[RMDB]
RNA sequence: GGGAACGACUCGAGUAGAGUCGAAAAAAGUUAUCGUUGAAUGGACACGACGUCUGGGAUACACAAAGGAACAGCUAGCUGACAUGUGCUCUUAAAGCACGAGGUCAGGGUUGAUCCCACUAUUAAACCCUCUUACUGGGUUCGCCCAGUAAGAGGGAAAAGAAACAACAACAACAAC
Reactivity to 2A3 in 0.01 (KOAc 150mM, MgCl2 10mM, bicine 150mM(pH8.5), 24C), signal-to-noise 1, nucleotides 027 to 126: a010a010g210u170u000a200u140c090g010u060u070g110a070a080u170g030g020a030c000a000c070g300a050c100g000u050c010u030g030g050g020a000u050a020c050a020c080a010a140a030g020g000a050a050c020a000g060c050u100a030g060c040u020g000a000c020a070u150g000u000g000c000u010c000u070u300a290a140a000g010c000a000c010g020a070g000g050u000c000a020g000g010g010u010u000g000a020u000c000c020c040a030c000u070a110u080u200a000a020a000
Reactivity to DMS in 0.01 (KOAc 150mM, MgCl2 10mM, bicine 150mM(pH8.5), 24C), signal-to-noise 1, nucleotides 027 to 126: a050a090g030u010u010a070u000c060g020u000u000g010a220a080u050g000g030a010c020a170c100g020a180c110g030u000c030u010g000g000g000a110u010a020c110a130c120a040a050a070g000g000a000a120c050a040g020c010u000a140g020c010u000g040a010c000a120u000g020u000g000c000u000c300u020u010a050a060a020g000c000a010c000g020a070g000g000u000c000a000g010g000g040u000u000g000a120u010c000c000c000a100c170u010a070u020u000a060a090a100
Chemical mapping of a 177-nucleotide RNA with 2A3 and DMS.
For DMS the reverse transcriptase was MarathonRT.
For 2A3 the reverse transcriptase was SuperScript II with manganese.